[RMDB]
RNA sequence: GGGAACGACUCGAGUAGAGUCGAAAAGAAAAUGGUACGAACGGUUCCAAAGGAGCCGAAGUUCAAAGGUAAGGCAUCGAUCUAAAAUCGUAUCAAAAAGGUAACGAGCUUGGCAAUGAACAAAAAAUCUCGAAGAAAAGUUCGCUUUUCUUCGAGAAAAAGAAACAACAACAACAAC
Reactivity to DMS in 0.01 (KOAc 150mM, MgCl2 10mM, bicine 150mM(pH8.5), 24C), signal-to-noise 1, nucleotides 027 to 126: g000a090a080a200a050u010g010g060u000a020c000g050a100a290c010g010g000u000u000c000c050a080a140a290g020g010a010g020c000c000g000a030a090g030u020u020c150a030a070a100g000g000u000a070a030g000g000c090a000u010c030g000a050u000c030u000a010a090a140a060u000c010g040u000a010u000c060a000a060a210a090a050g000g010u030a050a050c090g010a040g040c000u000u000g000g000c080a060a090u030g010a010a000c070a000a020a160a150a030a140